[RMDB]
RNA sequence: GGGAACGACUCGAGUAGAGUCGAAAAUGGACGUUGUUCGCAACGUCCACAUACUGUGACGUACGUUAAACGUAUCGCGGGCAAAAGUGCAGUUAGAAUAAGUACCUAUUGAGUUCGCUCAAUAGAAGUAUACGGUUGGUUUCGACCAACCGUAUACAAAAGAAACAACAACAACAAC
Reactivity to 2A3 in 0.01 (KOAc 150mM, MgCl2 10mM, bicine 150mM(pH8.5), 24C), signal-to-noise 3, nucleotides 027 to 126: u060g000g000a000c000g000u000u000g030u030u040c160g010c080a000a000c010g000u000c010c010a000c000a000u040a010c000u020g030u040g120a020c040g030u020a010c020g020u010u170a190a170a040c020g000u010a010u160c080g000c040g000g100g000c060a080a060a030a040g060u090g020c030a030g030u050u100a070g050a180a070u160a250a000g060u060a050c000c010u000a000u000u010g020a010g000u010u110c210g030c060u000c000a000a010u020a000g000a070a000
Reactivity to DMS in 0.01 (KOAc 150mM, MgCl2 10mM, bicine 150mM(pH8.5), 24C), signal-to-noise 3, nucleotides 027 to 126: u000g000g000a010c010g010u000u010g030u010u020c190g030c020a030a020c000g020u000c010c000a010c130a060u000a070c040u010g020u000g010a060c060g010u000a020c030g000u000u020a070a100a240c010g010u000a070u010c050g030c060g020g000g000c120a060a030a050a050g010u000g010c020a040g010u000u000a100g010a130a090u010a030a100g010u000a140c090c010u000a010u000u000g000a000g010u000u020c210g000c000u000c000a000a010u000a000g000a050a100